The record gives the reactivity of an RNA of 207 nucleotides to DMS and 2A3. The RNA was probed in 150 mM KOAc, 10 mM MgCl2 and 150 mM bicine (pH 8.5) at 24 C.
RNA sequence: GGGAACGACUCGAGUAGAGUCGAAAAAUUGGAACACACCGAAUUGCACGGGCGAGUUCCACAAUCAUUAUCUUUUGUCGGCACACAUUGUUUCAAUGUUGUAGAAUAGGAAUAGUUCAGCGCACAAUAUUGAGGUAAUUGAACAUCGCCAAUGCACACCCCCUUAGGUAUUCGUACCUAAGGGGGUAAAAGAAACAACAACAACAAC
Reactivity to DMS in 0.01 (KOAc 150mM, MgCl2 10mM, bicine 150mM(pH8.5), 24C), signal-to-noise 1, nucleotides 027 to 156: a120u010u020g020g020a130a060c070a120c030a230c040c000g000a040a110u010u000g030c060a080c010g060g040g000c010g010a170g000u000u010c060c170a090c150a060a040u010c060a120u000u000a060u010c020u000u000u000u000g010u000c090g060g030c050a090c070a130c070a060u000u010g000u000u000u010c020a060a030u010g000u000u020g020u010a070g030a140a050u020a060g010g030a030a100u010a080g000u000u000c030a090g050c080g090c060a070c040a070a050u000a060u000u010g010a030g000g030u010a040a070u000u000g010a070a020c050a040u000c040g090c010c000a020a060u000g000c010a050c250
Reactivity to 2A3 in 0.01 (KOAc 150mM, MgCl2 10mM, bicine 150mM(pH8.5), 24C), signal-to-noise 3, nucleotides 027 to 156: a000u090u060g020g020a080a000c090a010c050a050c100c020g060a080a050u210u120g030c050a040c060g060g010g010c060g000a030g000u000u010c020c000a010c030a030a030u150c060a030u110u200a030u050c080u020u040u050u050g040u060c050g040g030c060a030c000a000c010a070u020u040g120u030u130u120c040a060a020u050g060u020u030g040u070a030g040a040a030u090a160g080g050a060a050u070a130g140u100u110c020a030g080c080g020c040a020c000a040a030u060a030u040u070g020a040g040g010u040a040a110u080u090g030a060a010c040a130u090c030g000c000c000a020a010u050g000c020a050c010